[RMDB]
RNA sequence: GGGAACGACUCGAGUAGAGUCGAAAACGGUUACGCCUUCUUUACCGUUAUCAAGGAAGGUACUCGGCCAUGCUAAGGGAAGCAUUAUUCCUUAGGCGCAUGUCGCCGUCAGCAUGGUGUGAGGGGAAAAAGUAUGCUGGGUUCGCCCAGCAUACAACACAGCUUGUCAGUUCGCUGACAAGCUGUGAAAAGAAACAACAACAACAAC
Reactivity to 2A3 in 0.01 (KOAc 150mM, MgCl2 10mM, bicine 150mM(pH8.5), 24C), signal-to-noise 2, nucleotides 027 to 156: c000g040g000u030u030a010c050g020c000c000u010u000c000u000u000u030a040c010c000g190u120u120a070u090c060a000a000g040g000a000a010g000g000u020a010c000u000c020g000g040c000c000a000u000g000c010u070a050a050g000g010g010a020a010g000c090a150u080u060a160u280u000c020c000u010u070a110g010g020c000g000c080a230u230g060u220c010g000c000c000g060u100c030a000g020c020a000u000g000g030u050g110u100g040a010g000g000g010g010a030a060a080a040a000g000u000a000u000g000c010u000g000g000g080u030u090c200g070c010c000c000a000g000c000a000u000a000c000a000a000

Source information
An RNA of 207 nucleotides, treated with 2A3 and read out base by base. Source: RMDB library M2RFPK, as collected in RNAgym. Reactivities are given for positions 27 through 156. Conditions: 150 mM KOAc, 10 mM MgCl2 and 150 mM bicine (pH 8.5), 24 C.